Overview
Source: RMDB library RFMREP, as collected in RNAgym. An RNA of 177 nucleotides, treated with 2A3 and DMS and read out base by base.
RNA sequence: GGGAACGACUCGAGUAGAGUCGAAAAGAGCGAGAAACCCAAAUUUGGUAGGGGAACCGUCCUGAAGGAAUCAAACGGAAGGGACGGAUGGUAUCUUCGGAUGCCAUAGAUAGAUGGCUACCGCUCUGCGUGUAGUAGAGUUCGCUCUACUACACGCAAAAGAAACAACAACAACAAC
Reactivity to 2A3 in 0.01 (KOAc 150mM, MgCl2 10mM, bicine 150mM(pH8.5), 24C), signal-to-noise 2, nucleotides 027 to 126: g000a000g000c040g000a050g080a150a080a090c020c010c020a020a130a100u260u140u100g060g020u050a120g000g070g030g040a010a020c000c000g010u000c010c020u040g000a000a000g060g040a050a170u250c090a190a050a040c010g020g010a040a040g050g000g000a020c010g000g000a000u000g000g000u010a020u050c020u000u020c150g070g020a000u020g010c000c000a000u010a000g020a000u060a020g140a080u090g080g000c010u010a020c020c000g000c030u040c070u040
Reactivity to DMS in 0.01 (KOAc 150mM, MgCl2 10mM, bicine 150mM(pH8.5), 24C), signal-to-noise 2, nucleotides 027 to 126: g020a010g030c000g050a010g000a110a150a150c100c010c030a020a070a110u000u000u010g030g010u000a130g020g000g000g010a040a210c090c000g020u060c000c000u040g000a270a200g000g000a100a110u020c300a070a120a090c100g010g000a110a130g000g000g000a000c000g000g000a030u000g010g010u000a010u000c000u070u020c240g000g000a010u000g000c020c000a000u000a040g010a110u020a020g000a060u030g000g000c030u010a170c060c010g040c080u020c000u030

The 2A3 profile rests on 2,058 reads.